[RMDB]
RNA sequence: GGGAACGACUCGAGUAGAGUCGAAAACACGCUUACUGAAGCGGGCUAUGUCGGUGAAGAUGUGGAAAACAUCGUUCUAAGACUAUUACAAGCUGCUGAUUAUGACGUUGCAAGAGCAGAACGGGGAGUAGGGUUCCAGAUUCGUCUGGAACCCUACAAAAGAAACAACAACAACAAC
Reactivity to DMS in 0.01 (KOAc 150mM, MgCl2 10mM, bicine 150mM(pH8.5), 24C), signal-to-noise 1, nucleotides 027 to 126: c030a110c050g000c000u000u030a090c170u020g000a230a050g000c030g020g010g020c060u020a160u010g010u010c030g000g000u010g020a010a120g000a000u000g000u000g010g030a140a080a120a010c000a020u030c030g010u000u000c020u000a300a100g000a030c000u000a120u000u010a060c250a000a080g000c030u000g000c000u000g000a160u000u000a060u000g000a090c130g010u010u010g000c120a230a010g000a070g000c040a010g000a070a150c120g010g000g000g000a280
The record gives the reactivity of an RNA of 177 nucleotides to DMS. Conditions: 150 mM KOAc, 10 mM MgCl2 and 150 mM bicine (pH 8.5), 24 C.